[RMDB]
RNA sequence: GGGAACGACUCGAGUAGAGUCGAAAAGAGCAUGUUCGCAUGCUCAAAUCGGGGUCCUCCAGCGAGAGGCUUUUGACGAGCUGAAGCCUCCACGGCUCGAUAAGCUCCCCACCUCGCUGAGGACGGAGGCACCCAUAACGUGUGGUUCGCCACACAAUGCAGUAUACGAGUUCGCUCGUAUACUGCAAAAAGAAACAACAACAACAAC
Reactivity to 2A3 in 0.01 (KOAc 150mM, MgCl2 10mM, bicine 150mM(pH8.5), 24C), signal-to-noise 2, nucleotides 027 to 156: g000a000g000c000a000u010g010u080u170c280g020c110a000u030g040c010u000c020a050a050a000u120c060g110g000g080g000u010c000c020u040c080c090a000g010c010g000a000g020a040g130g130c090u100u040u050u160g240a140c060g000a000g000c010u070g000a040a000g030c000c000u010c000c000a030c000g010g000c000u000c030g110a110u040a220a010g010c010u160c050c020c000c000a020c000c000u000c000g000c000u000g010a000g000g000a000c000g000g000a010g000g020c010a030c020c030c000a000u100a100a050c070g000u010g000u010g000g070u070u100c180g030c080c010a010c010a000c020a000a030
This 207-nucleotide RNA was probed chemically with 2A3. 2A3 adducts were read by reverse transcription with SuperScript II with manganese. The reactions ran in a buffer of 150 mM KOAc, 10 mM MgCl2 and 150 mM bicine (pH 8.5), at 24 C.